The record gives the reactivity of an RNA of 177 nucleotides to 2A3 and DMS. Values cover nucleotides 27 to 126. The data come from the RNA Mapping Database (RMDB), libraries RFM100 and RFMREP. Conditions: 150 mM KOAc, 10 mM MgCl2 and 150 mM bicine (pH 8.5), 24 C.
RNA sequence: GGGAACGACUCGAGUAGAGUCGAAAAACAGCACCUUACGAGGUGCUGACGGAGUUCCAACAGGCCAUACAACUUUGCGUUUGCAUGGCACUGCUGAAACUCCGAAAGCAUGCGUACGCGCAUGCAACAAACAGAUGUCCUUCGGGACAUCUGUUUGAAAAGAAACAACAACAACAAC
Reactivity to 2A3 in 0.01 (KOAc 150mM, MgCl2 10mM, bicine 150mM(pH8.5), 24C), signal-to-noise 7, nucleotides 027 to 126: a000c010a000g000c010a010c010c000u060u060a070c290g100a020g000g000u000g000c000u000g000a000c000g000g000a000g000u020u000c010c000a000a000c000a010g010g000c000c000a000u020a010c000a080a010c030u170u240u300g110c110g140u110u060u030g020c020a000u000g070g040c230a220c150u010g000c000u000g000a010a000a000c000u010c000c000g010a030a000a000g010c000a000u000g000c000g010u020a040c200g000c010g000c090a000u000g000c000a000a030
Reactivity to DMS in 0.01 (KOAc 150mM, MgCl2 10mM, bicine 150mM(pH8.5), 24C), signal-to-noise 3, nucleotides 027 to 126: a160c010a000g000c010a010c020c010u000u010a140c230g000a020g010g020u000g010c000u000g000a120c000g000g000a010g020u000u000c040c000a010a030c010a020g000g000c010c000a010u000a060c010a010a000c020u010u030u040g020c200g010u020u010u020g050c020a010u010g000g010c000a100c000u020g030c080u000g000a010a000a000c010u000c000c000g000a040a020a110g010c000a000u000g000c000g020u000a080c230g030c020g010c000a020u000g010c020a070a140